[RMDB]
RNA sequence: GGGAACGACUCGAGUAGAGUCGAAAAGAUAAGGGGUUGGCGCACCUGCCACCUGCCUACCCGUCCCUUCCAAGGAGGUGGGGGCUAGGAUGUGGCGGCCUCUUAACAGGAUGAUGUGGCUUCCUGCCCUGCCUGGAUCCUGAAAGGGAGGAGCCUAAGCACCCUAUUAGUUCGCUAAUAGGGUGCUAAAAGAAACAACAACAACAAC
Reactivity to 2A3 in 0.01 (KOAc 150mM, MgCl2 10mM, bicine 150mM(pH8.5), 24C), signal-to-noise 1, nucleotides 027 to 156: g090a070u040a020a010g000g020g000g000u000u000g080g000c000g010c000a000c000c000u030g000c010c060a300c030c040u010g000c000c020u200a300c100c000c000g040u270c030c050c000u140u140c100c110a060a000g000g000a000g070g010u030g000g000g010g020g000c060u160a000g000g060a280u000g020u000g060g090c000g000g010c000c000u000c000u000u040a040a000c040a000g000g000a080u150g020a040u110g070u210g000g040c010u180u110c040c010u070g250c010c010c000u050g040c010c000u000g030g000a030u160c000c070u040g060a180a000a000g000g000g000a000g020g000a000g000c000c000u000a040